Structure probing data (DMS and 2A3) for a 170-nucleotide construct. The 2A3 profile rests on 3,327 reads.

RNA sequence: GGGAACGACUCGAGUAGAGUCGAAAAUUAUGCUUCCACUAGCUUACUUUAGUGAUUCAAAACUCGGCACCACAGAGGUUAAAGUGAGUGCUUUGAAAACAGCCGGCGUUGUGACAGGUAAUGUUGUAAGGAUUCCACUUCGGUGGAAUCAAAAGAAACAACAACAACAAC
Reactivity to DMS in 0.01 (KOAc 150mM, MgCl2 10mM, bicine 150mM(pH8.5), 24C), signal-to-noise 4, nucleotides 027 to 129: u030u030a140u060g040c060u000u020c030c010a090c130u020a000g030c150u000u000a030c120u010u000u000a070g040u000g000a150u100u000c170a030a030a020a050c080u040c050g010g030c030a020c040c020a060c050a180g050a100g050g040u020u140a080a040a040g050u000g020a000g070u020g020c090u030u000u090g030a030a030a070a040c090a170g030c020c040g070g020c000g030u040u060g030u020g020a090c140a010g010g030u000a000a010u000g040u000u040g070u040a010a020g000
Reactivity to 2A3 in 0.01 (KOAc 150mM, MgCl2 10mM, bicine 150mM(pH8.5), 24C), signal-to-noise 3, nucleotides 027 to 129: u170u110a100u220g000c000u100u080c040c000a030c080u030a000g000c040u110u090a060c000u150u070u040a030g010u040g090a070u150u110c070a000a000a110a050c060u060c080g080g010c000a000c020c020a000c030a000g060a050g120g130u140u140a110a020a000g010u000g020a090g070u000g000c030u070u060u100g100a000a000a000a000c020a000g040c010c000g030g020c040g050u020u030g030u050g040a000c000a060g030g000u020a080a100u070g000u000u000g010u010a000a130g090